The data come from the RNA Mapping Database (RMDB), library OK3TST. Structure probing data (DMS and 2A3) for a 207-nucleotide construct. For DMS the reverse transcriptase was MarathonRT.
RNA sequence: GGGAACGACUCGAGUAGAGUCGAAAAUAUGUUGCGUGCUCCUUAUGAGAAUCUAAUACCUGAUGAUCUGUCACUGUCUCCCAUCCCUCCCAGGUAGGACCCUCUAGUUGCAGGAAAACAAGGUCAGGGCUGCCACUGGUUCUAUAAUACAUUAUGGCAGAUAUAGUGACUUCGGUCACUAUAUCUGAAAAGAAACAACAACAACAAC
Reactivity to DMS in 0.01 (KOAc 150mM, MgCl2 10mM, bicine 150mM(pH8.5), 24C), signal-to-noise 2, nucleotides 027 to 156: u010a070u000g050u010u010g000c040g040u000g020c030u010c000c010u000u010a110u010g000a090g000a080a110u000c070u020a110a130u000a080c070c020u000g010a100u000g020a050u010c010u010g030u000c070a100c000u000g020u000c030u010c010c020c000a140u000c030c020c010u000c030c090c030a170g010g030u000a090g040g020a070c030c000c020u010c040u000a100g000u010u000g000c040a080g000g010a060a040a070a040c070a070a070g030g040u000c040a100g030g020g040c030u010g000c020c040a100c060u000g000g020u000u000c040u000a090u000a050a110u010a070c070a140u010u000a080u000g040g010
Reactivity to 2A3 in 0.01 (KOAc 150mM, MgCl2 10mM, bicine 150mM(pH8.5), 24C), signal-to-noise 1, nucleotides 027 to 156: u210a090u170g030u040u050g010c010g030u020g000c020u030c030c010u020u120a070u200g000a000g030a070a080u050c000u090a020a040u030a160c050c010u030g050a030u040g000a040u000c020u010g020u010c010a000c100u040g020u000c020u040c020c030c030a070u020c000c000c010u030c020c000c000a000g000g030u030a020g000g050a070c000c010c000u040c050u040a030g000u030u000g000c000a020g020g000a000a110a050a000c000a070a020g090g000u050c050a000g070g000g000c000u020g020c010c020a030c050u070g000g000u030u050c000u000a050u050a160a090u040a110c070a030u170u130a050u180g060g010
Background:
Values are in units of 0.01, from 0 to 300, in steps of 10. The 2A3 profile rests on 776 reads.